About this RNA:
This 207-nucleotide RNA was probed chemically with DMS and 2A3. For DMS the reverse transcriptase was MarathonRT. The reactions ran in a buffer of 150 mM KOAc, 10 mM MgCl2 and 150 mM bicine (pH 8.5), at 24 C. It was measured as part of the RMDB library OK3TST. For DMS, 25,935 sequencing reads were counted.
[RMDB]
RNA sequence: GGGAACGACUCGAGUAGAGUCGAAAAGAUUAAGUGGGAGCGUCGCCCUAUCGGUGCAUCGGAUAUUAAUUAGCCAGUGCGUGGCACUACGCAUAUUGAUGUCUACUUUGGCGUAGACUGUGCCAAUUUAAGGAUUGAUGGGCAAUCCAGCCCUAGAACUAAUGAUAGCAUUCGUGCUAUCAUUAGUAAAAGAAACAACAACAACAAC
Reactivity to DMS in 0.01 (KOAc 150mM, MgCl2 10mM, bicine 150mM(pH8.5), 24C), signal-to-noise 7, nucleotides 027 to 156: g020a160u010u010a060a120g010u000g010g020g000a110g020c080g030u000c060g020c020c010c020u000a070u010c060g020g030u010g010c030a080u000c060g010g000a080u000a070u000u000a050a130u000u000a150g020c020c020a070g030u000g010c020g030u000g030g020c040a180c020u000a080c060g020c030a160u000a100u000u010g000a120u010g010u000c050u010a070c040u000u000u010g020g020c080g020u000a060g000a050c060u010g010u000g010c010c010a040a080u000u000u000a090a130g020g010a130u000u000g010a110u000g010g000g030c020a080a080u000c090c050a140g000c000c000c000u000a060g010a060
Reactivity to 2A3 in 0.01 (KOAc 150mM, MgCl2 10mM, bicine 150mM(pH8.5), 24C), signal-to-noise 9, nucleotides 027 to 156: g050a030u140u170a070a050g060u110g030g050g000a040g020c020g040u040c030g030c010c000c010u130a180u300c040g020g000u030g010c010a070u060c050g050g000a010u030a050u160u130a170a060u080u080a040g040c020c030a030g020u020g030c040g030u050g040g000c040a010c070u110a020c030g000c030a040u060a100u110u170g080a070u140g020u000c010u010a030c030u090u110u140g090g000c040g010u000a010g010a040c020u020g020u030g020c010c010a030a040u110u130u100a090a040g030g010a030u020u050g010a010u060g010g010g000c000a010a030u010c020c010a010g020c010c000c000u040a070g040a040